Conditions: 150 mM KOAc, 10 mM MgCl2 and 150 mM bicine (pH 8.5), 24 C.
Structure probing data (2A3 and DMS) for a 177-nucleotide construct.
The 2A3 profile rests on 5,665 reads.
For 2A3 the reverse transcriptase was SuperScript II with manganese.
For DMS the reverse transcriptase was MarathonRT.
[RMDB]
RNA sequence: GGGAACGACUCGAGUAGAGUCGAAAAAGAAUAUUGCGUAGGCCUUUGCUUCGAAAGAAACACUUUACUGUUCGCAGCAAUCUCCUCCGCAAUAUUUUAAACUUGCUGACAGUUCGCUGUCAGCAAGGAGUGGUAGAAAGUUCGCUUUCUACCACUCAAAAGAAACAACAACAACAAC
Reactivity to 2A3 in 0.01 (KOAc 150mM, MgCl2 10mM, bicine 150mM(pH8.5), 24C), signal-to-noise 4, nucleotides 027 to 126: a000g030a010a010u000a010u010u010g010c000g000u000a000g010g010c000c020u040u030u010g010c010u010u010c010g010a020a020a020g080a030a160a020c130a060c150u150u230u280a140c050u110g150u200u020c010g000c010a010g000c010a010a020u010c010u000c010c000u000c000c000g000c000a000a000u000a000u000u000u000u000a020a010a000c000u000u000g000c000u000g000a000c010a010g010u030u090c150g110c110u010g000u000c000a000g020c000a000a000g000
Reactivity to DMS in 0.01 (KOAc 150mM, MgCl2 10mM, bicine 150mM(pH8.5), 24C), signal-to-noise 3, nucleotides 027 to 126: a070g000a000a010u000a010u000u020g010c000g010u000a020g010g030c040c070u000u000u000g020c000u010u010c000g020a000a070a050g000a130a070a110c250a140c260u010u010u010a100c090u000g010u010u010c010g010c110a030g020c000a010a010u000c030u000c000c000u000c040c000g010c010a010a000u000a000u000u000u000u010a030a040a300c010u000u000g000c000u000g000a010c000a000g000u000u020c240g020c000u000g010u010c000a030g000c010a000a000g000